[RMDB]
RNA sequence: GGGAACGACUCGAGUAGAGUCGAAAAGAGUUGUGUGAUAAACGAGACGGCUUCCGGAUUGUCACGCCUGUUGGCCAACUCAAUUAACAGUGGAAGCUUCAUCGAUGAGCCCGAACUUCAUUUGCUACCCAUGAUACUAGUUCGCUAGUAUCAUGGGAAAAGAAACAACAACAACAAC
Reactivity to DMS in 0.01 (KOAc 150mM, MgCl2 10mM, bicine 150mM(pH8.5), 24C), signal-to-noise 5, nucleotides 027 to 126: g010a070g000u000u000g000u010g050u000g020a090u010a050a110a120c040g000a050g000a120c290g010g000c010u000u000c010c010g000g000a100u000u000g010u000c060a130c300g010c020c030u010g030u000u020g020g020c020c070a060a150c090u000c020a030a040u000u010a080a090c140a090g010u010g010g000a020a030g000c010u000u000c130a150u000c040g010a060u000g010a170g020c010c010c020g020a060a050c110u010u000c090a120u000u000u000g010c120u010a140
Reactivity to 2A3 in 0.01 (KOAc 150mM, MgCl2 10mM, bicine 150mM(pH8.5), 24C), signal-to-noise 4, nucleotides 027 to 126: g080a010g010u010u090g040u000g020u010g060a100u080a140a180a030c020g010a010g010a000c030g020g000c000u030u010c010c010g010g080a060u040u090g030u060c000a020c060g040c000c020u240g160u300u300g050g000c020c010a010a070c030u010c060a010a040u130u060a170a070c070a070g160u120g120g000a000a030g000c000u030u030c070a080u010c010g070a080u070g040a000g040c000c010c040g030a040a030c050u120u100c060a160u050u040u210g070c030u070a080
Description: Structure probing data (DMS and 2A3) for a 177-nucleotide construct. The RNA was probed in 150 mM KOAc, 10 mM MgCl2 and 150 mM bicine (pH 8.5) at 24 C.